[RMDB]
RNA sequence: GGGAACGACUCGAGUAGAGUCGAAAACCGCACAGAUGAUGGCGGCCGCGCGCGACCUGCAGUUCGAGCUGGCGGCCCGGUUCCGCGACGAGAUCGCCGACCUCAAGCGGGAGCUGCGGGGGAUGGAGCGCGUUAAUAGAUUCGUCUAUUAACGCGCAAAAGAAACAACAACAACAAC
Reactivity to 2A3 in 0.01 (KOAc 150mM, MgCl2 10mM, bicine 150mM(pH8.5), 24C), signal-to-noise 2, nucleotides 027 to 126: c000c000g000c010a110c030a030g230a090u240g040a030u110g150g000c000g010g020c010c010g010c020g000c020g000c030g020a100c000c000u050g000c010a000g010u070u070c030g040a030g050c060u020g070g000c030g020g020c000c000c000g010g000u120u060c010c000g020c020g000a050c090g000a020g000a100u010c060g040c150c060g080a100c020c020u050c050a060a000g000c000g040g020g000a000g000c000u000g000c030g010g000g000g020g020a030u140g050g070a070
Reactivity to DMS in 0.01 (KOAc 150mM, MgCl2 10mM, bicine 150mM(pH8.5), 24C), signal-to-noise 3, nucleotides 027 to 126: c000c000g010c120a110c110a110g000a090u000g000a090u010g020g000c030g020g020c050c000g020c030g020c030g020c040g020a080c040c020u010g020c070a030g010u000u000c050g000a160g010c000u000g020g020c040g010g000c000c020c040g000g000u010u000c030c020g000c040g000a130c230g010a050g010a100u020c010g010c140c080g000a090c080c030u010c000a160a230g010c040g020g000g010a010g000c010u000g010c020g010g000g010g020g000a090u000g010g010a300